[RMDB]
RNA sequence: GGGAACGACUCGAGUAGAGUCGAAAAUCACGGUUGCCGCUGUACUCCGGCAUGUCGAGUCCGCCGACGGUCGGCCCGAGCCGAACGAGGCCUGGGCGAUCGCCCUACAGAGCUUCGACGAGGCUGACCCCAGACAUAGGUUCGCCUAUGUCUGGGGAAAAGAAACAACAACAACAAC
Reactivity to 2A3 in 0.01 (KOAc 150mM, MgCl2 10mM, bicine 150mM(pH8.5), 24C), signal-to-noise 1, nucleotides 027 to 126: u060c010a020c040g000g000u070u090g010c000c000g080c070u140g090u090a100c030u010c020c000g010g000c040a050u060g070u060c000g040a030g030u020c010c100g040c030c000g090a090c000g010g000u020c000g110g050c000c000c000g050a020g000c000c000g050a150a100c050g020a030g010g020c000c000u020g000g020g040c010g050a100u050c110g000c010c000c000u110a130c130a030g060a030g060c060u040u080c010g300a300c000g000a120g010g000c020u030g060a090
Reactivity to DMS in 0.01 (KOAc 150mM, MgCl2 10mM, bicine 150mM(pH8.5), 24C), signal-to-noise 1, nucleotides 027 to 126: u010c110a070c070g000g020u000u000g000c030c020g010c070u000g050u000a170c080u000c100c040g020g000c010a080u000g010u010c040g000a140g010u000c060c030g000c070c060g020a030c020g000g010u000c020g000g030c000c030c020g000a090g010c000c010g000a220a090c160g000a090g020g000c000c000u000g000g000g030c000g000a030u020c130g030c040c010c030u000a200c250a060g010a110g020c030u010u000c050g000a070c020g020a290g000g000c040u000g020a120
Structure probing data (2A3 and DMS) for a 177-nucleotide construct. For DMS, 881 sequencing reads were counted. For DMS the reverse transcriptase was MarathonRT. The RNA was probed in 150 mM KOAc, 10 mM MgCl2 and 150 mM bicine (pH 8.5) at 24 C. The data come from the RNA Mapping Database (RMDB), library OK2TRN.